[RMDB]
RNA sequence: GGGAACGACUCGAGUAGAGUCGAAAAGUCAGCUUGUUCGCAAGCUGACAAACUGGACACACCCAGACCCAGGCGAAGCCGUGUCAAAAUGGGUGUGGGUAAAAAGGACACUGUUCGCAGUGUCCAACACGAAAGUUCAGUUCGCUGAACUUUCGUGAAAAGAAACAACAACAACAAC
Reactivity to DMS in 0.01 (KOAc 150mM, MgCl2 10mM, bicine 150mM(pH8.5), 24C), signal-to-noise 1, nucleotides 027 to 126: g000u000c000a000g000c000u000u020g000u020u000c190g000c000a000a010g030c010u000g040a000c000a000a050a080c100u000g000g000a090c030a010c020a030c000c000c000a040g000a050c010c040c040a090g000g000c080g020a140a130g020c020c100g000u020g000u000c050a080a080a100a280u000g000g000g000u000g000u010g010g010g040u010a030a020a060a130a050g000g020a000c000a000c010u000g000u000u000c230g010c010a030g010u000g000u010c000c000a030a060
Reactivity to 2A3 in 0.01 (KOAc 150mM, MgCl2 10mM, bicine 150mM(pH8.5), 24C), signal-to-noise 1, nucleotides 027 to 126: g010u010c010a000g020c010u020u010g020u080u160c190g060c100a000a030g000c020u020g000a000c000a000a000a000c010u010g110g040a010c010a000c000a000c050c000c000a000g020a010c030c030c050a060g070g000c140g150a180a070g030c040c050g100u080g000u080c050a090a120a090a160u090g010g000g010u060g010u000g040g000g020u060a080a080a040a050a040g020g010a010c000a000c000u010g020u040u090c200g020c130a010g000u020g020u000c000c000a000a010
Chemical mapping of a 177-nucleotide RNA with DMS and 2A3. Source: RMDB library M2PK50, as collected in RNAgym. For DMS, 1,102 sequencing reads were counted. The RNA was probed in 150 mM KOAc, 10 mM MgCl2 and 150 mM bicine (pH 8.5) at 24 C.